Overview: An RNA of 177 nucleotides, treated with 2A3 and DMS and read out base by base.
[RMDB]
RNA sequence: GGGAACGACUCGAGUAGAGUCGAAAAUUUGGUGAGCUAUAACCUCAAAGUGCAAUCCAAAUAUCGUUUCCAGAAUUUAUUGGGACACGUGGCUUGUAUCGGGUUGGCGGUGUGGCUGGUAUGGGCACUGACCAAAUCCAUUCGUGGAUUUGGUCAGAAAAGAAACAACAACAACAAC
Reactivity to 2A3 in 0.01 (KOAc 150mM, MgCl2 10mM, bicine 150mM(pH8.5), 24C), signal-to-noise 2, nucleotides 027 to 126: u030u000u000g040g000u050g020a030g000c010u010a020u070a280a110c020c030u090c150a170a110a010g110u070g020c010a000a020u060c000c010a000a010a010u090a070u040c080g000u010u000u020c000c000a010g100a050a120u230u300u270a160u180u120g000g000g000a020c050a000c140g070u030g070g030c020u060u090g040u120a010u140c050g110g000g000u000u040g040g050c020g070g020u070g010u050g070g020c000u030g030g070u050a140u070g020g010g060c090a030
Reactivity to DMS in 0.01 (KOAc 150mM, MgCl2 10mM, bicine 150mM(pH8.5), 24C), signal-to-noise 2, nucleotides 027 to 126: u000u000u000g020g000u000g010a300g000c010u010a120u000a140a130c100c050u010c080a050a090a140g020u010g010c000a010a150u000c000c000a010a040a010u000a090u000c070g000u000u000u000c000c010a110g010a120a090u010u000u000a110u020u000g010g000g000a090c080a050c090g040u010g010g010c040u000u000g010u000a060u000c080g000g010g010u000u000g010g000c090g020g000u000g000u010g000g000c060u000g010g030u000a020u010g010g010g020c100a160
It was measured as part of the RMDB library OK2TRN. Reactivities are rounded to 0.1 and cut off at 0 and 3. The DMS profile rests on 1,588 reads.